Annotation: Structure probing data (DMS) for a 177-nucleotide construct. Reactivities are given for positions 27 through 126. For DMS, 806 sequencing reads were counted. The RNA was probed in 150 mM KOAc, 10 mM MgCl2 and 150 mM bicine (pH 8.5) at 24 C. In probing experiments dimethyl sulfate is read out at A N1 and C N3, which are open when not base-paired.
RNA sequence: GGGAACGACUCGAGUAGAGUCGAAAAUUAAAGAGUUUCCAUUAACAAAUCCAGUUAUUGCGAUCGGGAAUACAACCUCCCAUCUUGGUUGACUUAAAGGUUCCAUAGGAACCUGGAAGCUAAAAAAUACCCCAUUUAGAUUCGUCUAAAUGGGGUAAAAAGAAACAACAACAACAAC
Reactivity to DMS in 0.01 (KOAc 150mM, MgCl2 10mM, bicine 150mM(pH8.5), 24C), signal-to-noise 1, nucleotides 027 to 126: u030u000a120a120a160g010a150g000u000u010u000c000c010a130u000u030a110a080c080a040a110a060u000c060c070a070g000u000u000a040u000u000g040c080g010a050u000c150g050g000g010a020a070u020a010c170a040a110c290c110u000c000c000c040a090u000c070u000u010g000g010u000u000g030a050c100u000u000a080a050a020g020g020u000u010c000c000a090u020a150g030g000a000a000c030c010u000g000g050a020a030g000c030u010a000a020a110a070a050a180